[RMDB]
RNA sequence: GGGAACGACUCGAGUAGAGUCGAAAAGAUAUGGACGUGUGAGAGCGCGGACCGGAUGUGUCGGAAACGAUGAACGGUCCGACCCGCUCACACACGUCCUAAGUCAAAACCCAGGUUCGCCUGGGAACUCAUGUUUAGAGUUCGCUCUAAACAUGAGAAAAGAAACAACAACAACAAC
Reactivity to DMS in 0.01 (KOAc 150mM, MgCl2 10mM, bicine 150mM(pH8.5), 24C), signal-to-noise 5, nucleotides 027 to 126: g010a030u010a300u010g000g010a010c010g020u000g020u000g010a070g010a010g010c000g030c020g010g000a030c010c000g010g010a070u010g020u010g010u000c000g000g000a100a090a190c020g010a010u000g000a080a160c020g000g000u000c000c000g000a040c150c210c070g000c010u000c000a090c000a010c010a000c000g000u010c000c000u010a000a050g010u000c020a080a060a070a120c000c000c000a010g000g010u000u010c190g010c010c010u000g000g000g010a020a060
Reactivity to 2A3 in 0.01 (KOAc 150mM, MgCl2 10mM, bicine 150mM(pH8.5), 24C), signal-to-noise 5, nucleotides 027 to 126: g040a020u070a050u150g000g000a000c010g000u010g000u010g000a040g010a000g030c050g000c030g010g010a010c020c020g030g000a160u150g280u100g000u160c010g010g040a100a070a090c010g000a020u060g030a060a030c010g000g000u000c000c000g010a030c010c000c010g010c000u000c000a010c000a000c000a000c000g000u000c000c000u000a000a000g000u000c000a010a040a050a120c000c010c000a000g030g020u030u050c280g080c050c010u000g000g000g000a020a020

The data come from the RNA Mapping Database (RMDB), library TTRDEL. Chemical mapping of a 177-nucleotide RNA with DMS and 2A3. Values cover nucleotides 27 to 126. 2A3 adducts were read by reverse transcription with SuperScript II with manganese. For DMS, 9,250 sequencing reads were counted.